[RMDB]
RNA sequence: GGGAACGACUCGAGUAGAGUCGAAAACGGCUAAUUUUUUGUAUUUUUAGUAGAGACAGGGUCUCACCACCGUGUUAGCCAGGAUGGUUCAAGGUCCUUUGUUGAUUCUUCUUGGGAAUUUCCACUGGAGGCAAGCAGGGCAACACUUAUUUGAGAACUACUAUGAUUCGUUCGCGAAUCAUAGUAGAAAAGAAACAACAACAACAAC
Reactivity to 2A3 in 0.01 (KOAc 150mM, MgCl2 10mM, bicine 150mM(pH8.5), 24C), signal-to-noise 3, nucleotides 027 to 156: c050g010g000c030u050a030a180u020u050u030u020u130u150g060u150a220u060u140u050u090u150a070g030u030a030g020a010g010a040c050a050g090g020g020u030c020u040c050a020c020c000a030c010c030g020u040g020u110u080a010g000c010c020a010g040g020a060u040g050g000u080u100c060a040a030g030g000u030c020c000u030u080u080g070u030u040g040a040u010u000c010u030u020c020u040u030g040g020g040a110a090u140u140u090c010c020a060c090u060g010g000a030g030g000c030a040a020g000c010a000g000g020g000c000a040a030c030a020c050u170u170a150u130u160u110g100a080g030a060a010
Reactivity to DMS in 0.01 (KOAc 150mM, MgCl2 10mM, bicine 150mM(pH8.5), 24C), signal-to-noise 1, nucleotides 027 to 156: c080g010g040c010u000a050a030u010u000u000u000u000u010g010u020a070u000u000u010u000u000a050g000u020a040g010a140g000a090c080a050g020g050g000u000c050u000c010a080c040c010a110c040c040g020u030g000u000u000a070g000c090c030a100g000g000a050u000g010g030u010u000c050a050a080g000g010u000c010c030u010u000u000g020u000u000g000a120u020u000c020u000u000c040u000u000g040g010g030a120a070u020u000u030c040c010a120c110u010g010g010a030g020g050c030a030a070g010c060a100g060g020g000c040a030a040c050a060c050u020u000a120u000u000u000g000a180g000a090a250